[RMDB]
RNA sequence: GGGAACGACUCGAGUAGAGUCGAAAAUUAAGAUUACAAUGUACUUGAGUCAUUGACAUGUGAGAUCAAUAUACCUGCAUGUUAGUCUUAAGUUCUGAUAGAAAUGACAUGCAAUUAUGCUGCCAAAGAAUCCUGAUUAAUUCGUUAAUCAGGAUUCAAAAGAAACAACAACAACAAC
Reactivity to DMS in 0.01 (KOAc 150mM, MgCl2 10mM, bicine 150mM(pH8.5), 24C), signal-to-noise 9, nucleotides 027 to 126: u020u010a060a090g000a090u010u010a110c130a080a070u020g010u000a020c040u010u000g000a040g010u010c060a070u010u010g000a030c040a050u020g010u000g020a070g010a110u010c110a060a090u010a100u010a070c060c040u000g000c010a010u000g000u000u000a020g000u000c030u000u000a030a030g010u020u010c060u000g000a120u020a060g010a060a090a090u010g000a030c020a020u020g010c010a050a110u010u010a070u000g030c040u000g000c030c040a040a080a100
Reactivity to 2A3 in 0.01 (KOAc 150mM, MgCl2 10mM, bicine 150mM(pH8.5), 24C), signal-to-noise 9, nucleotides 027 to 126: u110u050a070a030g050a060u080u110a080c100a070a080u180g030u030a030c010u020u040g020a000g030u030c050a070u030u060g020a010c010a020u060g050u080g160a060g010a090u090c070a140a030u100a020u060a260c010c020u000g000c010a000u010g000u000u010a030g020u000c000u020u050a050a050g010u110u000c030u060g100a120u070a150g100a040a120a050u100g020a020c020a030u100g010c000a010a000u100u030a060u150g020c020u020g040c020c040a050a070a020
Chemical mapping of a 177-nucleotide RNA with DMS and 2A3. DMS adducts were read by reverse transcription with MarathonRT. The RNA was probed in 150 mM KOAc, 10 mM MgCl2 and 150 mM bicine (pH 8.5) at 24 C. In probing experiments dimethyl sulfate is read out at A N1 and C N3, which are open when not base-paired.